Overview:
This 177-nucleotide RNA was probed chemically with DMS and 2A3. The DMS profile rests on 5,969 reads.
RNA sequence: GGGAACGACUCGAGUAGAGUCGAAAAAGAAACUGAGUCUCUGCUGCUGCAAAAAUCACUAUCAGGAGAUAAGCAGUCCACUAAUUCCAACAAUUUCUGGGGAUUUGGAUGAUCACCAACCUGAAAGAGUUUUACAGUAAUUCGUUACUGUAAAACUAAAAGAAACAACAACAACAAC
Reactivity to DMS in 0.01 (KOAc 150mM, MgCl2 10mM, bicine 150mM(pH8.5), 24C), signal-to-noise 6, nucleotides 027 to 126: a090g010a120a080a090c070u000g010a100g010u000c040u000c030u000g010c050u000g010c050u000g010c080a020a060a060a090a070u010c070a100c100u010a090u010c050a060g000g010a110g010a060u000a060a120g020c050a090g010u000c050c030a060c190u000a040a080u000u010c020c030a070a100c150a070a130u000u000u000c090u000g010g010g010g000a080u000u000u000g000g010a050u010g000a090u000c080a090c050c040a050a080c030c020u000g010a050a100a120g000
Reactivity to 2A3 in 0.01 (KOAc 150mM, MgCl2 10mM, bicine 150mM(pH8.5), 24C), signal-to-noise 5, nucleotides 027 to 126: a010g050a040a030a010c040u050g010a010g070u020c010u020c010u060g020c030u000g010c010u020g000c040a010a040a040a050a160u130c050a060c060u090a080u140c020a030g040g040a060g010a070u060a070a050g010c020a010g030u000c010c000a050c030u080a060a070u060u000c030c000a060a020c030a090a270u090u200u120c120u140g040g000g000g030a030u040u030u030g030g020a030u090g030a020u100c010a020c050c020a030a090c000c010u030g030a100a060a020g100
Values cover nucleotides 27 to 126. The reactions ran in a buffer of 150 mM KOAc, 10 mM MgCl2 and 150 mM bicine (pH 8.5), at 24 C.